RNA sequence: GGGAACGACUCGAGUAGAGUCGAAAAUGUGACAUGUUCGCAUGUCACAAGCCAGGUAGUUCCUAUCUCAAUUACCUGUUCAGGCCAUGGUCUGGAUAGGAAAGCUCUACCUAUUCGUAGGUAGAAAGUGUACCUUGUUAUUCGUAACAAGGUACACAAAAGAAACAACAACAACAAC
Reactivity to DMS in 0.01 (KOAc 150mM, MgCl2 10mM, bicine 150mM(pH8.5), 24C), signal-to-noise 4, nucleotides 027 to 126: u010g010u000g010a010c000a000u000g010u000u020c280g030c000a010u000g000u010c010a010c000a040a090g020c060c060a140g000g010u000a070g020u000u000c010c020u000a060u010c120u000c110a100a130u000u010a080c000c000u010g010u010u000c020a020g000g010c010c040a130u000g070g020u000c010u000g010g000a000u000a020g010g000a050a060a070g000c150u000c000u000a000c000c000u000a020u000u000c200g020u000a010g000g000u000a000g000a010a020a070